[RMDB]
RNA sequence: GGGAACGACUCGAGUAGAGUCGAAAAUCUUCUAAUUGCAAACAUUCAGUUGCUCAGUUGGUUAGUUACCUUUCUGAACGCUGUAAUGUUAUUGCUGAUUCUAAGUCCUUCACACUUAUCUUUGGUGCAACGCACCUCUUCGGAGGUGCGAAAAGAAACAACAACAACAAC
Reactivity to DMS in 0.01 (KOAc 150mM, MgCl2 10mM, bicine 150mM(pH8.5), 24C), signal-to-noise 8, nucleotides 027 to 129: u030c040u040u040c050u070a020a020u040u040g020c050a040a030a060c000a010u000u000c000a000g030u040u130g130c020u000c000a020g010u000u000g000g000u000u010a150g010u050u040a070c010c080u020u050u040c010u020g030a020a030c000g030c020u030g040u160a010a010u020g000u000u050a070u040u020g030c000u030g000a020u030u030c020u050a050a030g000u060c030c050u070u130c090a220c030a010c030u030u020a080u040c060u030u000u040g020g010u010g040c190a080a220
Reactivity to 2A3 in 0.01 (KOAc 150mM, MgCl2 10mM, bicine 150mM(pH8.5), 24C), signal-to-noise 9, nucleotides 027 to 129: u040c010u110u010c030u060a040a060u100u080g010c010a010a020a020c000a010u000u000c000a000g020u110u200g300c010u000c000a010g000u010u010g040g010u030u070a050g040u100u230a070c000c000u050u120u120c000u010g000a010a010c000g000c010u020g040u300a010a010u000g000u020u060a070u060u040g000c020u050g040a040u030u010c040u080a040a030g040u030c000c000u090u180c080a050c000a000c050u070u090a050u140c030u040u050u080g020g000u050g020c040a090a060
The data come from the RNA Mapping Database (RMDB), library 15KLIB. The record gives the reactivity of an RNA of 170 nucleotides to DMS and 2A3. High 2A3 reactivity points to a flexible backbone, as in loops and unpaired stretches. The RNA was probed in 150 mM KOAc, 10 mM MgCl2 and 150 mM bicine (pH 8.5) at 24 C. For 2A3 the reverse transcriptase was SuperScript II with manganese.